The record gives the reactivity of an RNA of 207 nucleotides to 2A3 and DMS. For 2A3, 1,018 sequencing reads were counted. High 2A3 reactivity points to a flexible backbone, as in loops and unpaired stretches. It was measured as part of the RMDB library OK3TST.

RNA sequence: GGGAACGACUCGAGUAGAGUCGAAAAUCAGUUAGUCAAUAGUUCUACAAAUGCUUGGAAGGCUCAAGAAAGUCAGAUGCGAAGCGCUGGCGACUAUUUAGGUGCUGCACAGGCUAAGUAUGAUGGCUUGGGGAAUUCUAUCCAGAACCAACAGCAACGUUGGUUCAUGAUUCGUCAUGAACCAACGAAAAGAAACAACAACAACAAC
Reactivity to 2A3 in 0.01 (KOAc 150mM, MgCl2 10mM, bicine 150mM(pH8.5), 24C), signal-to-noise 2, nucleotides 027 to 156: u080c010a030g110u030u170a040g010u060c010a010a070u040a070g020u020u070c030u070a130c030a060a220a030u100g040c020u060u060g040g040a060a010g080g000c010u030c080a050a220g090a140a000a000g000u030c000a010g030a050u030g030c030g080a050a030g030c110g000c070u020g000g000c010g040a000c010u020a120u150u180u120a060g020g020u080g060c060u060g000c030a030c040a080g000g000c000u010a030a050g040u040a040u100g130a090u030g040g000c000u020u040g040g010g000g050a010a120u080u060c030u080a190u050c010c010a040g040a090a040c010c000a040a040c010a000g020c020a020a040
Reactivity to DMS in 0.01 (KOAc 150mM, MgCl2 10mM, bicine 150mM(pH8.5), 24C), signal-to-noise 1, nucleotides 027 to 156: u000c020a090g060u000u000a030g070u000c020a090a110u000a170g020u000u000c030u050a200c060a110a050a110u000g010c070u000u000g020g000a130a050g010g000c000u000c070a170a170g000a060a050a060g010u000c020a050g030a060u000g000c000g010a170a020g060c090g000c020u000g060g020c020g010a040c010u010a130u010u030u000a140g040g030u000g020c040u020g200c080a200c000a020g050g010c010u000a040a300g000u020a070u000g020a120u000g010g000c070u000u010g000g000g040g030a040a090u000u020c120u010a120u000c060c020a110g000a110a040c040c000a030a090c080a110g000c030a050a210